This 177-nucleotide RNA was probed chemically with 2A3 and DMS. It was measured as part of the RMDB library TTRDEL.

[RMDB]
RNA sequence: GGGAACGACUCGAGUAGAGUCGAAAAGAUAUGGAUCUCUCCCUCUCACCUAUGAAGUCGGAAACGAUGGAGGUGGGGGCGGAGAGGAUCCUAAGUCAAAAGGAACAUAGCUUCGGCUAUGUUCCAACACCUUAUCGUCGUUCGCGACGAUAAGGUGAAAAGAAACAACAACAACAAC
Reactivity to 2A3 in 0.01 (KOAc 150mM, MgCl2 10mM, bicine 150mM(pH8.5), 24C), signal-to-noise 2, nucleotides 027 to 126: g030a040u090a030u210g010g000a010u000c020u000c000u060c030c020c000u000c010u010c010a000c000c010u300a300u300g020a040a020g000u000c010g040g040a090a040a040c000g000a020u020g000g030a030g000g010u020g000g000g010g040g000c250g000g030a000g000a000g020g000a000u000c000c000u010a140a020g070u050c050a030a040a120a180g000g020a010a000c010a000u030a000g010c000u090u090c300g010g000c000u020a000u000g010u010u000c010c000a000a000
Reactivity to DMS in 0.01 (KOAc 150mM, MgCl2 10mM, bicine 150mM(pH8.5), 24C), signal-to-noise 2, nucleotides 027 to 126: g020a050u010a300u000g010g000a030u010c000u000c000u010c000c000c020u020c000u000c000a000c010c010u000a220u000g000a150a180g020u000c010g000g010a190a090a290c020g020a010u000g010g000a030g010g010u000g030g020g000g000g000c160g040g000a020g020a020g010g000a000u000c000c010u030a020a130g000u010c020a030a050a130a140g010g020a010a000c000a000u000a050g010c000u020u010c220g040g000c000u010a000u000g010u000u000c000c000a050a050